The data come from the RNA Mapping Database (RMDB), library OK2TRN. Structure probing data (DMS) for a 177-nucleotide construct. For DMS, 792 sequencing reads were counted. The reactions ran in a buffer of 150 mM KOAc, 10 mM MgCl2 and 150 mM bicine (pH 8.5), at 24 C.
RNA sequence: GGGAACGACUCGAGUAGAGUCGAAAAGCACUAUUGAGACUGUUCUUAGAAAGGGUCUUUCCCUCAGCGACCUUUAGAUCCAUCAGAUAAGCUUUGUACUGGCCCAAGUGCCGCAGCGUCAGAUCCGCGACGCGGCAACAUUCGUGUUGCCGCGUCGAAAAGAAACAACAACAACAAC
Reactivity to DMS in 0.01 (KOAc 150mM, MgCl2 10mM, bicine 150mM(pH8.5), 24C), signal-to-noise 1, nucleotides 027 to 126: g030c100a120c070u000a090u000u010g000a230g000a030c030u020g000u000u000c050u000u000a170g020a090a110a110g000g000g000u000c000u020u000u000c020c010c020u000c100a050g010c060g000a050c050c070u000u000u000a090g040a060u010c010c020a080u000c050a120g000a110u020a130a180g040c100u010u000u000g000u020a040c080u000g010g010c000c030c110a050a080g020u000g020c030c040g020c090a030g030c070g050u010c030a110g000a140u010c090c020g000